Source information:
This 177-nucleotide RNA was probed chemically with DMS and 2A3. The RNA was probed in 150 mM KOAc, 10 mM MgCl2 and 150 mM bicine (pH 8.5) at 24 C. Reactivities are given for positions 27 through 126. Source: RMDB library RFMREP, as collected in RNAgym.
RNA sequence: GGGAACGACUCGAGUAGAGUCGAAAACGGGGGUGUCAGGGCGGCUGAGGGGAAGGAGGCUCUAGUACGAGAGGAACGAGCCUCCGGCGCCACUGGUUUACCGGUUGUCCGGCAGGGCAUCGCCGGGGAUAAUUAUUGAGUUCGCUCAAUAAUUAUCAAAAGAAACAACAACAACAAC
Reactivity to DMS in 0.01 (KOAc 150mM, MgCl2 10mM, bicine 150mM(pH8.5), 24C), signal-to-noise 4, nucleotides 027 to 126: c050g000g000g020g030g010u000g010u010c090a070g000g010g030c090g010g000c090u000g000a110g020g000g010g020a180a110g030g010a020g020g010c000u000c000u000a080g000u000a120c010g000a240g000a190g010g000a120a110c150g000a010g000c000c000u000c000c010g000g010c090g000c040c020a070c050u000g010g000u000u000u000a090c010c010g000g000u000u000g000u010c010c020g000g000c110a060g020g000g000c030a040u000c080g000c010c000g000g000g020
Reactivity to 2A3 in 0.01 (KOAc 150mM, MgCl2 10mM, bicine 150mM(pH8.5), 24C), signal-to-noise 2, nucleotides 027 to 126: c000g020g000g000g020g010u070g080u080c060a030g060g040g070c070g000g000c060u070g070a060g050g000g000g010a030a050g010g000a000g000g020c010u000c000u000a020g010u010a000c010g020a020g010a060g100g000a030a010c000g000a000g000c000c000u000c000c000g000g010c010g020c010c000a050c030u020g000g070u090u150u080a110c010c020g000g000u040u020g020u030c010c000g030g020c050a050g040g050g000c020a020u070c060g030c060c020g000g000g000